[RMDB]
Structure probing data (2A3) for a 207-nucleotide construct.
Values cover nucleotides 27 to 156.
The 2A3 profile rests on 546 reads.
The RNA was probed in 150 mM KOAc, 10 mM MgCl2 and 150 mM bicine (pH 8.5) at 24 C.
The data come from the RNA Mapping Database (RMDB), library OK3TST.
RNA sequence: GGGAACGACUCGAGUAGAGUCGAAAAUUGGUGUACCACUGGGGACGCAAGAGCCCUGGACUCAGCUCCAGUGCGGUUACCAUCGAAUGGGAAAUUGAGAACGACUAUUACUCUAUCGGUUCUCCGAGGGUCCAGAGCGGCACGUACCGCAUGAUAAGGUGGCGAUACCAUUCGUGGUAUCGCCACCAAAAGAAACAACAACAACAAC
Reactivity to 2A3 in 0.01 (KOAc 150mM, MgCl2 10mM, bicine 150mM(pH8.5), 24C), signal-to-noise 1, nucleotides 027 to 156: u000u010g000g020u020g000u070a000c000c000a000c000u000g000g050g000g040a060c060g000c070a130a200g000a070g070c030c000c120u070g000g000a030c000u010c020a020g000c000u010c000c000a000g000u000g050c050g140g020u000u010a010c000c020a050u120c010g100a130a080u190g000g060g160a030a110a130u300u140g060a120g020a120a020c000g050a000c020u050a120u300u000a010c020u030c010u030a000u110c020g180g000u040u010c060u000c000c020g040a140g000g030g000u000c010c010a010g050a100g000c000g000g000c090a090c300g060u100a100c060c010g000c000a100u140g030a070u180a080a180